[RMDB]
RNA sequence: GGGAACGACUCGAGUAGAGUCGAAAAGUGCGGAGUGAAAUUCAUAGGAGCCUCACCAUUAUGGUUGAACGCCGCGGUAGUCCGCGUAGUCGCGACGUAAACGUUCUGUGUUCGCGUUCAGGCCUCACAGGCUAUAGUAGUUCGCUACUAUAGCCUGAAAAGAAACAACAACAACAAC
Reactivity to DMS in 0.01 (KOAc 150mM, MgCl2 10mM, bicine 150mM(pH8.5), 24C), signal-to-noise 6, nucleotides 027 to 126: g020u000g020c040g000g000a070g010u000g010a060a060a090u010u000c070a080u000a100g010g010a120g010c030c020u000c050a050c040c020a180u000u000a070u010g000g020u000u000g010a050a040c030g010c010c020g010c010g000g010u000a130g010u010c020c030g010c030g010u000a080g020u000c010g010c030g020a020c010g010u010a080a070a090c070g000u000u000c090u010g020u000g010u000u000c070g010c030g000u000u010c070a080g010g000c030c040u010c130a260
Reactivity to 2A3 in 0.01 (KOAc 150mM, MgCl2 10mM, bicine 150mM(pH8.5), 24C), signal-to-noise 3, nucleotides 027 to 126: g120u080g040c060g000g050a040g030u140g070a110a080a140u240u180c060a090u140a170g130g000a010g050c010c010u040c020a030c000c000a040u230u140a080u290g010g000u000u020g010a020a030c010g000c020c010g000c020g040g000u070a060g060u060c090c020g000c040g050u040a060g120u090c010g000c000g060a040c010g010u080a030a050a070c030g090u150u060c060u070g050u030g040u190u140c030g000c000g020u020u030c020a040g040g030c030c010u030c010a060

Structure probing data (DMS and 2A3) for a 177-nucleotide construct. For DMS, 9,272 sequencing reads were counted. High DMS reactivity at an A or C suggests that its Watson-Crick edge is free. The 2A3 profile rests on 2,674 reads.